[RMDB]
RNA sequence: GGGAACGACUCGAGUAGAGUCGAAAAACAGGAGUGGGAUAGGCACGGCCAAAAUGCGUCCCAAACGAUUCACACCAUUCUCAUUUACGUAUUCGGCGAUAAAUCCAUUAAGAAUAUACGCAAAUUUAUGCUCGGUAUUGAAACGUUUGCGAUUAACCACGACUCUUAUGUUCGCAUAAGAGUCGUGAAAAGAAACAACAACAACAAC
Reactivity to 2A3 in 0.01 (KOAc 150mM, MgCl2 10mM, bicine 150mM(pH8.5), 24C), signal-to-noise 3, nucleotides 027 to 156: a000c040a010g060g030a040g080u090g020g040g080a130u120a100g100g000c050a040c120g060g030c020c020a050a110a040a060u160g010c050g000u020c000c010c000a010a010a010c030g020a060u110u050c040a020c040a020c040c010a030u080u050c050u020c060a120u100u110u090a050c020g020u040a050u010u080c040g030g010c030g010a030u100a130a060a030u070c050c050a030u170u190a090a040g030a120a020u120a000u020a150c020g000c020a040a030a050u100u140u020a120u150g030c030u020c090g010g050u080a090u140u190g020a020a060a030c020g020u010u000u030g010c030g050a030u130u090a030a040c050
Reactivity to DMS in 0.01 (KOAc 150mM, MgCl2 10mM, bicine 150mM(pH8.5), 24C), signal-to-noise 1, nucleotides 027 to 156: a040c070a080g000g000a120g020u000g000g030g010a150u000a140g030g000c040a040c100g000g050c050c110a060a100a110a080u000g010c090g050u000c000c020c000a060a080a070c040g010a150u000u000c010a150c060a020c000c010a110u020u020c040u000c190a080u000u000u000a020c000g000u000a030u010u010c060g050g010c050g000a120u000a090a090a100u010c010c000a210u000u000a050a140g030a060a060u010a070u000a030c050g020c020a000a070a050u000u010u000a050u020g010c100u020c040g020g010u000a100u000u020g010a040a070a140c040g000u000u010u010g020c040g000a100u010u030a030a130c070